Structure probing data (DMS and 2A3) for a 177-nucleotide construct. The RNA was probed in 150 mM KOAc, 10 mM MgCl2 and 150 mM bicine (pH 8.5) at 24 C. For DMS the reverse transcriptase was MarathonRT. For 2A3 the reverse transcriptase was SuperScript II with manganese. Source: RMDB libraries RFM100 and RFMREP, as collected in RNAgym.
[RMDB]
RNA sequence: GGGAACGACUCGAGUAGAGUCGAAAAUCAGCCUUGCGGACCAACAGGAGGACUCCCAGCUUUCCCUUUUCAAGAGGUCCCCAGACACCGGCCACCCUCUUCCAGCCCCUGCGGCCAGUGCAAGGAGUAGCCUUAGAGAUUUCGAUCUCUAAGGCUAAAAAGAAACAACAACAACAAC
Reactivity to DMS in 0.01 (KOAc 150mM, MgCl2 10mM, bicine 150mM(pH8.5), 24C), signal-to-noise 4, nucleotides 027 to 126: u020c090a100g000c030c000u000u010g000c020g000g010a090c050c060a110a120c150a060g000g040a060g010g020a110c050u000c010c000c010a100g000c090u000u000u020c010c000c010u030u000u010u020c110a100a110g000a090g010g000u010c000c000c020c050a030g000a090c110a060c090c060g000g000c020c020a070c060c030c040u000c020u000u010c080c030a090g010c020c010c010c040u000g020c050g020g000c030c010a040g020u030g010c010a050a040g000g000a100g000
Reactivity to 2A3 in 0.01 (KOAc 150mM, MgCl2 10mM, bicine 150mM(pH8.5), 24C), signal-to-noise 4, nucleotides 027 to 126: u070c020a020g040c000c010u010u040g020c050g030g030a070c010c040a050a140c040a070g070g010a040g050g040a060c020u030c000c010c000a010g020c040u020u020u050c020c000c000u040u020u020u100c100a110a020g040a010g060g060u030c010c000c000c010a010g020a040c030a010c050c000g020g000c020c000a010c010c000c000u020c020u100u030c010c000a030g000c020c000c010c000u040g010c050g020g030c050c000a040g010u040g060c000a030a020g000g030a040g060